[RMDB]
RNA sequence: GGGAACGACUCGAGUAGAGUCGAAAAACGCACAACAUGGAAGAUGUCUUAAAUCGCGCCAGAAAGGGCGAAAUUAAGAUCACGCCGGAUAUCAUGGAUGUCGUGUUGCGCUCCAUUGAUUUGAUGAGGCAAGAACCACGUUCGCGUGGUUCUUGCCAAAAGAAACAACAACAACAAC
Reactivity to 2A3 in 0.01 (KOAc 150mM, MgCl2 10mM, bicine 150mM(pH8.5), 24C), signal-to-noise 1, nucleotides 027 to 126: a010c030g060c000a080c020a040a170c010a010u060g020g010a010a030g030a120u070g030u030c000u050u110a000a090a040u030c020g070c130g200c050c000a100g300a300a120a140g030g010g020c000g000a020a010a010u100u030a000a000g030a010u010c010a000c050g080c000c060g020g000a080u150a030u110c000a060u090g030g040a050u080g130u110c030g000u180g160u050u130g020c020g000c000u000c010c020a020u000u150g130a090u070u150u160g180a210u040g060a040